Source: RMDB library TTRDES, as collected in RNAgym. The record gives the reactivity of an RNA of 177 nucleotides to DMS and 2A3. Conditions: 150 mM KOAc, 10 mM MgCl2 and 150 mM bicine (pH 8.5), 24 C.
[RMDB]
RNA sequence: GGGAACGACUCGAGUAGAGUCGAAAAAAAAGAUAUGGACCGAUGAACUACGCUGGAGGUCAGCGUUGAAAUGAAAUCGGAAACGAUUUCAUGGAGCUGGCGAAGGCGCAUCGGUCCUAAGUCAAAACGUACAUUACGUCUUCGGACGUAAUGUACGAAAAGAAACAACAACAACAAC
Reactivity to DMS in 0.01 (KOAc 150mM, MgCl2 10mM, bicine 150mM(pH8.5), 24C), signal-to-noise 2, nucleotides 027 to 126: a070a020a050a090g000a030u020a220u010g010g000a030c010c000g030a020u000g000a090a050c150u000a300c030g020c020u000g040g010a300g010g020u010c000a000g020c010g000u020u010g010a100a090a020u010g000a010a000a000u000c000g020g000a050a040a100c000g000a020u000u000u000c000a000u000g000g010a040g010c000u000g000g000c010g000a300a260g000g000c060g010c020a000u000c010g000g000u000c000c000u000a000a010g000u020c020a090a030a100a080
Reactivity to 2A3 in 0.01 (KOAc 150mM, MgCl2 10mM, bicine 150mM(pH8.5), 24C), signal-to-noise 1, nucleotides 027 to 126: a010a000a000a040g030a010u040a020u110g000g000a000c000c010g000a000u020g020a090a140c150u160a040c300g000c020u010g030g040a170g300g210u000c000a000g000c000g210u300u020g000a040a000a000u000g000a010a000a000u000c010g040g000a040a010a000c020g000a000u000u000u000c000a000u000g000g010a040g050c000u000g000g030c020g000a030a020g020g000c000g010c020a000u000c000g000g000u000c000c000u000a000a010g000u000c000a050a000a090a040